Structure probing data (DMS) for a 177-nucleotide construct. DMS adducts were read by reverse transcription with MarathonRT. Conditions: 150 mM KOAc, 10 mM MgCl2 and 150 mM bicine (pH 8.5), 24 C. Reactivities are rounded to 0.1 and cut off at 0 and 3.

RNA sequence: GGGAACGACUCGAGUAGAGUCGAAAAGAUAUGGACGAGAACUACAGAGUCACAAGCAAUGAUGAAAGAACUACGUCGGAAACGACGUAGUUCUUUUUGAGCUUGAAGUCUCUGCUCGUCCUAAGUCCGCUGUAAUGAAGUUCGCUUCAUUACAGCGAAAAGAAACAACAACAACAAC
Reactivity to DMS in 0.01 (KOAc 150mM, MgCl2 10mM, bicine 150mM(pH8.5), 24C), signal-to-noise 2, nucleotides 027 to 126: g000a070u000a220u000g000g010a010c010g000a080g000a080a070c090u050a300c010a000g000a030g010u010c050a270c020a000a020g010c000a210a180u010g000a100u000g000a000a000a000g000a020a030c000u000a000c010g030u000c000g010g000a140a040a200c010g000a000c000g000u000a000g000u000u000c000u020u000u000u000u000g000a230g000c000u000u000g000a040a160g020u000c000u000c000u000g000c020u020c000g000u010c000c000u000a010a110g010u010c040